Chemical mapping of a 207-nucleotide RNA with 2A3.
RNA sequence: GGGAACGACUCGAGUAGAGUCGAAAAUCUUUGCCUCCUGGGCGAUCUCAGCCAGUCGACCUAGAUCGCCACCCUUGGCGAUCAUCUUCUCGUAGAAGUCCUUGGCGACCUUCCGCUUUCCGGUGUCGGUGAACUCGGUGAACACGUGCCCAAGCUCGGUAAGCACUGUUUUCGAACAGUGCUUACCAAAAGAAACAACAACAACAAC
Reactivity to 2A3 in 0.01 (KOAc 150mM, MgCl2 10mM, bicine 150mM(pH8.5), 24C), signal-to-noise 1, nucleotides 027 to 156: u020c030u070u000u090g020c000c000u050c000c020u060g020g010g010c050g040a030u000c050u020c050a010g020c060c030a030g060u070c010g030a170c040c010u030a060g000a000u000c000g010c000c000a050c040c050c040u120u130g000g000c000g000a000u010c000a030u020c000u060u000c010u000c050g120u080a010g030a100a000g000u020c040c130u040u070g010g010c010g010a020c010c000u090u050c030c000g090c000u000u010u100c010c040g030g000u040g060u060c020g000g010u020g100a020a040c010u010c040g050g040u050g000a040a000c020a000c100g090u080g000c010c000c010a000a000g150c050u090c080